Overview:
Structure probing data (2A3) for a 207-nucleotide construct. For 2A3, 428 sequencing reads were counted.

RNA sequence: GGGAACGACUCGAGUAGAGUCGAAAACGCGACGGACAAUCACCCGGCUUGGGAGAUUUGGCAGCGCAACCGCAUGGACGCGCGCCAGGCCGAGGUGUACCGCCCGGCGCUGACCUACGGCGCGGCCUACGUGACGGUGCUGCCCGGCGACGACGGCCGCUGGGAGGGAUUUCGAUCCCUCCCAGCGAAAAGAAACAACAACAACAAC
Reactivity to 2A3 in 0.01 (KOAc 150mM, MgCl2 10mM, bicine 150mM(pH8.5), 24C), signal-to-noise 1, nucleotides 027 to 156: c000g000c000g010a010c000g010g000a050c090a060a050u030c010a020c010c000c000g080g070c050u070u080g000g020g000a150g130a150u120u160u180g050g110c060a010g000c010g000c040a020a100c030c020g080c200a050u280g020g060a080c060g030c000g010c010g050c070c040a040g000g040c010c020g120a300g020g000u010g010u010a010c000c060g000c000c000c000g000g000c080g000c010u030g020a170c020c020u060a030c040g090g020c050g020c000g030g060c000c030u050a060c100g020u020g180a080c010g000g050u090g040c000u080g010c020c000c000g020g000c120g070a100c010g000a030c090g100g000c050
2A3 adducts were read by reverse transcription with SuperScript II with manganese.